[RMDB]
RNA sequence: GGGAACGACUCGAGUAGAGUCGAAAAUCACUUUGCUUCCUCGCGCCCAUAAAAGAGAACAAGAUUUCAUGACUUUAUACAUAGAUUUUAUAGACUGGCAGUCUCAGGCUCGUUUCAAGUCCAUACCAGGUAGUCCUGGUUUCGACCAGGACUACCUAAAAGAAACAACAACAACAAC
Reactivity to 2A3 in 0.01 (KOAc 150mM, MgCl2 10mM, bicine 150mM(pH8.5), 24C), signal-to-noise 2, nucleotides 027 to 126: u090c070a070c120u000u060u180g000c000u070u150c010c000u000c010g070c000g040c000c030c000a120u240a080a040a000a000g180a090g030a120a000c030a030a170g000a020u050u250u000c010a010u070g220a170c030u180u090u110a210u040a160c030a050u080a030g080a030u100u020u000u020a220u110a000g000a040c000u000g060g040c000a000g000u000c000u020c010a000g010g000c000u000c020g000u100u020u210c000a000a060g000u000c040c000a120u080a210c000c010
Chemical mapping of a 177-nucleotide RNA with 2A3. For 2A3 the reverse transcriptase was SuperScript II with manganese. The data come from the RNA Mapping Database (RMDB), library OK1LIB. Values cover nucleotides 27 to 126. Conditions: 150 mM KOAc, 10 mM MgCl2 and 150 mM bicine (pH 8.5), 24 C. 2A3 is a SHAPE reagent: it acylates the 2'-hydroxyl of flexible nucleotides of all four kinds.